RNA sequence: GGGAACGACUCGAGUAGAGUCGAAAAGAUAUGGACGGACCAUAGGGAGCUGUGGAUCGGAAACGAUCCAUACAGCGAGGAUCUAUGUCCGUCCUAAGUCAAACGAGUAAGCUUCGGCUUACUCGAACUUUGCCUAAUAGUUCGCUAUUAGGCAAAGAAAAGAAACAACAACAACAAC
Reactivity to DMS in 0.01 (KOAc 150mM, MgCl2 10mM, bicine 150mM(pH8.5), 24C), signal-to-noise 5, nucleotides 027 to 126: g000a040u000a130u010g000g000a020c000g000g020a020c300c160a060u000a010g000g000g000a040g040c000u010g020u000g000g000a010u000c000g010g000a030a020a070c010g010a010u000c000c000a040u020a050c090a010g020c000g000a090g010g000a040u010c000u000a030u000g010u000c000c000g000u000c000c000u000a010a060g010u000c010a080a130a260c020g000a010g000u000a010a010g010c000u000u000c270g040g000c000u000u010a000c000u000c010g010a030a080
Reactivity to 2A3 in 0.01 (KOAc 150mM, MgCl2 10mM, bicine 150mM(pH8.5), 24C), signal-to-noise 4, nucleotides 027 to 126: g010a010u030a010u090g010g000a000c000g010g000a000c030c110a100u130a030g010g030g050a190g020c000u010g020u030g020g000a010u010c010g010g020a020a010a010c010g000a010u010c010c010a020u210a030c010a000g000c010g040a180g080g000a050u020c010u020a040u130g020u000c000c000g010u000c000c000u000a000a000g000u010c030a040a050a100c030g000a000g000u010a000a010g010c020u040u210c300g120g000c000u020u020a010c000u000c000g000a010a000